Conditions: 150 mM KOAc, 10 mM MgCl2 and 150 mM bicine (pH 8.5), 24 C. This 177-nucleotide RNA was probed chemically with DMS. It was measured as part of the RMDB library OK2TST.
[RMDB]
RNA sequence: GGGAACGACUCGAGUAGAGUCGAAAACCGGUUCGACCCGGAGAUGCCCAGGGACUUCACCGUAGGCCGUCUCUCUGCGGCAGAGGAACGCAAUCGCAGGGUGAAGAUGCUCAUGGUGGGCAUGGGGACAGAAACGGGUUUUCGAACCCGUUUCUGUAAAAGAAACAACAACAACAAC
Reactivity to DMS in 0.01 (KOAc 150mM, MgCl2 10mM, bicine 150mM(pH8.5), 24C), signal-to-noise 1, nucleotides 027 to 126: c020c000g010g020u000u010c130g020a200c100c000c000g000g000a130g000a060u000g000c000c000c010a090g010g010g000a120c030u000u000c000a030c000c000g050u040a170g020g030c140c030g000u000c030u000c020u000c010u000g040c120g020g030c110a090g000a060g000g010a040a030c070g000c080a180a110u030c160g010c070a070g020g020g010u000g000a030a030g000a080u000g000c000u000c060a170u000g010g030u000g010g000g010c010a030u000g000g010g000g020